[RMDB]
RNA sequence: GGGAACGACUCGAGUAGAGUCGAAAAAAGAGAAUACAGCUUAGCACGUUACGCAUUCGACUUUUAUGAGAUGAACUCAAAGACGCCGAUCCGCGCGAAGGAAGCUCAUAUGCAGAUGAAAGCGGCAACGAGGCAAUAAGUUCGCUUAUUGCCUCGUAAAAGAAACAACAACAACAAC
Reactivity to 2A3 in 0.01 (KOAc 150mM, MgCl2 10mM, bicine 150mM(pH8.5), 24C), signal-to-noise 2, nucleotides 027 to 126: a000a000g110a000g030a120a000u150a030c070a020g010c020u070u090a040g000c060a020c090g100u100u090a030c050g070c020a030u010u060c040g070a120c010u010u120u040u040a070u050g040a030g020a060u100g020a050a020c000u010c030a020a110a000g110a070c010g030c010c010g070a090u110c070c040g020c010g000c040g040a000a060g010g000a020a010g030c010u010c020a000u040a030u250g000c040a000g010a090u070g060a080a070a060g020c010g010g010c020a000
Reactivity to DMS in 0.01 (KOAc 150mM, MgCl2 10mM, bicine 150mM(pH8.5), 24C), signal-to-noise 2, nucleotides 027 to 126: a090a040g000a120g000a070a040u010a090c110a120g020c020u010u010a140g030c050a110c100g000u000u020a080c040g030c060a210u000u000c000g010a070c020u010u000u000u000a080u000g010a040g010a080u000g010a100a170c070u000c040a030a120a080g020a060c110g010c040c030g000a090u000c050c040g000c050g000c070g000a060a050g000g010a080a060g000c000u000c060a030u030a050u010g000c050a040g020a070u000g010a030a060a090g020c000g040g000c160a100
An RNA of 177 nucleotides, treated with 2A3 and DMS and read out base by base. For 2A3 the reverse transcriptase was SuperScript II with manganese. It was measured as part of the RMDB library OK2TRN. DMS adducts were read by reverse transcription with MarathonRT. The DMS profile rests on 1,341 reads. For 2A3, 1,479 sequencing reads were counted.